[RMDB]
RNA sequence: GGGAACGACUCGAGUAGAGUCGAAAAUCGGUUGCGGCGUUUUUGCCAAAUUGCAGAUGCAGACCACCCACCGGCGGUGCGCUAUGUCGGUCCGACCGGGGUAUGUAUCCGUGACCGCGUGGGUGAAGUGACGAUGAUUAUUCGUAAUCAUCGUCACAAAAGAAACAACAACAACAAC
Reactivity to DMS in 0.01 (KOAc 150mM, MgCl2 10mM, bicine 150mM(pH8.5), 24C), signal-to-noise 2, nucleotides 027 to 126: u000c050g000g020u000u000g010c130g010g000c040g000u000u000u000u000u010g020c010c050a040a080a060u010u000g010c060a070g020a090u010g000c050a100g010a120c140c030a060c000c020c000a110c020c000g010g010c030g000g020u000g000c080g010c100u000a050u000g010u000c010g000g000u010c110c200g000a100c020c010g010g010g020g030u000a020u000g010u010a130u010c020c000g000u000g000a100c010c010g000c160g040u000g000g000g010u000g010a050a090
Reactivity to 2A3 in 0.01 (KOAc 150mM, MgCl2 10mM, bicine 150mM(pH8.5), 24C), signal-to-noise 3, nucleotides 027 to 126: u050c010g040g000u050u070g050c060g050g000c060g060u040u020u000u190u300g000c020c030a010a030a030u170u140g000c020a020g060a200u090g030c010a000g030a110c030c000a000c010c010c000a010c010c000g000g000c010g000g000u040g040c020g000c080u020a030u100g300u090c000g010g070u060c060c130g070a160c010c000g000g000g000g000u010a000u140g000u000a010u040c000c020g010u070g130a110c020c060g020c080g020u020g010g030g020u020g020a060a030

Chemical mapping of a 177-nucleotide RNA with DMS and 2A3. The 2A3 profile rests on 3,053 reads. The data come from the RNA Mapping Database (RMDB), library OK2TST. The RNA was probed in 150 mM KOAc, 10 mM MgCl2 and 150 mM bicine (pH 8.5) at 24 C.